[RMDB]
An RNA of 177 nucleotides, treated with 2A3 and DMS and read out base by base.
RNA sequence: GGGAACGACUCGAGUAGAGUCGAAAAGAUAACGCGUUCGCGCGUUAUCAAAUAAACUUGACAAAUGCCGGUCAAGAAAAACGGGAUUAUAAGAUUGCUGAAAAAGAUAUAACUUCGGUUAUAUCAACUCAAGUAACUACUUCGGUAGUUACUUGAGAAAAGAAACAACAACAACAAC
Reactivity to 2A3 in 0.01 (KOAc 150mM, MgCl2 10mM, bicine 150mM(pH8.5), 24C), signal-to-noise 2, nucleotides 027 to 126: g000a010u010a000a000c020g040c000g010u020u060c230g010c000g000c010g120u000u010a010u000c000a020a010a010u050a010a040a030c020u010u000g010a000c020a010a140a140u260g110c080c060g080g020u000c030a000a010g110a090a040a020a010a000c060g030g030g020a040u110u110a060u150a300a050g060a170u100u180g110c020u070g030a020a070a020a090a040g020a010u020a000u000a010a000c000u070u080c220g100g000u020u000a000u000a000u000c000a000a020
Reactivity to DMS in 0.01 (KOAc 150mM, MgCl2 10mM, bicine 150mM(pH8.5), 24C), signal-to-noise 1, nucleotides 027 to 126: g010a000u000a000a000c000g000c010g040u000u000c140g040c000g030c000g010u000u000a000u010c000a040a050a110u020a120a050a200c010u000u000g000a000c000a050a040a050u010g000c050c050g010g010u000c000a000a010g000a150a020a030a070a090c110g000g000g000a080u000u010a110u010a120a060g000a060u010u000g010c070u000g010a070a040a030a110a120g000a010u000a010u000a010a010c020u000u000c140g010g000u000u000a010u000a000u010c010a090a090

The reactions ran in a buffer of 150 mM KOAc, 10 mM MgCl2 and 150 mM bicine (pH 8.5), at 24 C. For 2A3 the reverse transcriptase was SuperScript II with manganese. Source: RMDB library M2PK50, as collected in RNAgym.